Annotation
This 207-nucleotide RNA was probed chemically with 2A3 and DMS. For DMS the reverse transcriptase was MarathonRT. For DMS, 7,308 sequencing reads were counted. For 2A3 the reverse transcriptase was SuperScript II with manganese. For 2A3, 4,066 sequencing reads were counted. It was measured as part of the RMDB library OK3TST. The RNA was probed in 150 mM KOAc, 10 mM MgCl2 and 150 mM bicine (pH 8.5) at 24 C.
RNA sequence: GGGAACGACUCGAGUAGAGUCGAAAACUAUAACAGCGAAUACUGAUGAUCUUCUAUAAAUGUAUGUGGAAUUCUAUUUGAUGAUUCUUGUUUAACGCCACAGAAAUUUUGGAUAGGAUACAAGAAGAUUACCCAUGAUGUGGCAAAUGAGACCAGAUAUCAUGCUAUUAUUCGUAAUAGCAUGAUAAAAAGAAACAACAACAACAAC
Reactivity to 2A3 in 0.01 (KOAc 150mM, MgCl2 10mM, bicine 150mM(pH8.5), 24C), signal-to-noise 6, nucleotides 027 to 156: c030u050a040u080a250a080c050a020g040c040g170a110a040u140a160c040u050g060a090u050g040a050u060c010u080u000c040u080a110u150a220a160a100u140g030u100a060u090g030u050g030g060a060a050u030u000c020u050a090u080u130u060g070a070u050g030a040u070u040c000u020u030g050u040u060u030a070a040c070g010c010c000a010c000a020g110a050a130a060u130u180u100u060g020g010a030u030a120g070g010a020u050a130c030a070a040g060a050a000g010a030u040u030a060c030c000c000a010u060g010a030u040g030u010g010g000c000a020a050a050u070g010a020g030a020c010c030a010g000a030
Reactivity to DMS in 0.01 (KOAc 150mM, MgCl2 10mM, bicine 150mM(pH8.5), 24C), signal-to-noise 4, nucleotides 027 to 156: c050u000a130u000a110a170c030a070g000c010g020a150a100u010a090c040u020g010a130u010g000a040u000c020u000u010c020u010a140u000a050a090a130u000g000u000a050u000g010u000g010g020a120a060u010u000c010u010a040u000u000u000g030a080u000g020a080u000u000c030u000u000g010u000u010u010a070a120c180g000c050c070a020c010a050g010a070a060a180u000u000u000u010g010g010a060u000a040g020g020a140u000a110c080a110a070g000a060a030g020a100u000u010a070c000c010c030a090u000g000a120u010g040u000g000g070c020a040a040a090u000g010a090g020a250c040c000a060g020a300